[RMDB]
RNA sequence: GGGAACGACUCGAGUAGAGUCGAAAAACACACUCGUUUUGUAAUCGAGAAGUAGUUGCAAGAACGGUCCUCUCAUUGCCUGACUAGCUGAGAGCCAUCCUUCUAUCCCCACCGCCACCAUGUUCUUUCCACAACUGUCUUUCGAGACAGUUGUGGAAAAAGAAACAACAACAACAAC
Reactivity to 2A3 in 0.01 (KOAc 150mM, MgCl2 10mM, bicine 150mM(pH8.5), 24C), signal-to-noise 1, nucleotides 027 to 126: a010c060a000c000a040c000u000c060g010u050u050u070u300g170u220a100a050u070c000g000a030g020a290a030g020u100a000g010u000u050g000c060a070a020g060a100a050c080g030g000u010c000c030u000c000u030c040a030u000u250g000c040c020u000g030a080c040u020a020g010c000u000g010a000g000a000g090c000c000a050u060c020c000u000u000c050u050a040u010c010c000c000c000a010c000c000g080c020c020a060c000c020a150u050g000u010u000c000u010u010

Source information: Chemical mapping of a 177-nucleotide RNA with 2A3. Conditions: 150 mM KOAc, 10 mM MgCl2 and 150 mM bicine (pH 8.5), 24 C. The 2A3 profile rests on 643 reads.